[RMDB]
The record gives the reactivity of an RNA of 207 nucleotides to 2A3 and DMS. DMS adducts were read by reverse transcription with MarathonRT. The DMS profile rests on 2,853 reads. The RNA was probed in 150 mM KOAc, 10 mM MgCl2 and 150 mM bicine (pH 8.5) at 24 C.
RNA sequence: GGGAACGACUCGAGUAGAGUCGAAAAUGGCGCUGAUGUCCCGCUGAUAAGGAUGUUCCUCCUAAGGAAUACUGAUAUUCCUGAAGUAAAAUGCUAGGCUGCAGUUAUUGAAGGAAUCAUGAAAAUACAACCUCCCAACGAUAGCAGAGGCGGCAACUCUGUCAUUACUCUUCGGAGUAAUGACAGAAAAAGAAACAACAACAACAAC
Reactivity to 2A3 in 0.01 (KOAc 150mM, MgCl2 10mM, bicine 150mM(pH8.5), 24C), signal-to-noise 2, nucleotides 027 to 156: u080g020g000c030g000c030u040g000a030u100g030u030c030c030c000g000c030u040g030a080u050a180a070g080g010a040u110g060u030u020c030c020u040c000c000u040a040a000g030g000a050a020u060a120c060u120g020a110u060a030u160u000c000c000u000g000a040a000g020u070a030a080a060a140u060g000c050u050a020g200g000c060u030g050c030a000g000u080u080a070u110u070g060a080a050g060g000a030a030u040c010a050u130g100a000a090a100a030u210a100c030a030a080c020c010u050c000c020c020a030a040c070g020a030u040a010g000c030a010g020a000g080g020c000g000g000c010a010a040c060
Reactivity to DMS in 0.01 (KOAc 150mM, MgCl2 10mM, bicine 150mM(pH8.5), 24C), signal-to-noise 2, nucleotides 027 to 156: u020g020g020c000g010c060u030g020a170u010g020u000c020c030c010g010c020u020g030a130u000a090a080g040g010a160u000g020u000u020c070c030u010c020c090u000a140a030g010g030a070a010u000a300c070u020g010a190u000a040u000u000c010c040u000g000a200a120g020u000a060a050a080a100u000g000c050u010a030g050g030c050u040g020c000a100g020u000u000a080u000u000g000a200a130g020g000a170a120u000c060a080u010g000a070a040a060a140u000a070c030a050a010c030c000u000c000c000c000a070a090c060g000a150u010a080g040c060a050g010a120g010g040c050g000g000c060a060a040c100